[RMDB]
RNA sequence: GGGAACGACUCGAGUAGAGUCGAAAAAAGAAAUCAAAAAAGAUUUCUGAGACAAACACGCUUCACAAUGUGCGGCAAAGAAACAUUGUUUAUGCAAAGGCACUUCGCCAUGUGUGCUCAAACAUUGACUACCGUCCACCGUUCGCGGUGGACGGAACUAACUACGGAUGUUCGCAUCCGUAGUUAGAAAAGAAACAACAACAACAAC
Reactivity to 2A3 in 0.01 (KOAc 150mM, MgCl2 10mM, bicine 150mM(pH8.5), 24C), signal-to-noise 2, nucleotides 027 to 156: a000a000g030a010a000a010u020c030a070a040a260a210a010a070g000a010u020u010u000c020u020g040a030g020a060c070a010a200a010c050a030c050g010c000u000u000c000a000c000a010a000u000g000u000g000c000g020g050c050a170a110a050g070a040a040a000c000a000u000u020g070u000u120u090a050u050g030c030a040a080a110g010g000c010a010c040u190u120c140g050c110c050a070u110g030u020g000u010g030c000u030c090a080a130a050c040a110u070u160g050a140c000u070a110c010c010g040u030c010c000a000c010c000g010u030u040c210g010c050g070g020u000g000g000a000c000g010g000a000a000
Reactivity to DMS in 0.01 (KOAc 150mM, MgCl2 10mM, bicine 150mM(pH8.5), 24C), signal-to-noise 1, nucleotides 027 to 156: a070a010g030a050a030a000u050c030a030a020a130a220a300a240g000a040u000u010u000c000u000g000a100g060a130c050a190a070a110c120a030c000g020c020u020u010c000a050c000a050a010u000g050u000g020c000g000g010c040a100a030a090g030a030a000a030c000a000u000u000g000u010u000u000a050u000g020c030a060a100a100g000g000c010a080c000u000u000c120g000c190c160a110u000g050u000g000u000g000c030u000c020a080a110a080c010a040u000u000g020a190c080u020a140c000c020g100u000c000c000a040c000c010g000u000u000c300g000c080g110g000u000g010g000a010c000g000g000a000a030
Source: RMDB library M2RFPK, as collected in RNAgym. An RNA of 207 nucleotides, treated with 2A3 and DMS and read out base by base. The reactions ran in a buffer of 150 mM KOAc, 10 mM MgCl2 and 150 mM bicine (pH 8.5), at 24 C. The 2A3 profile rests on 1,244 reads.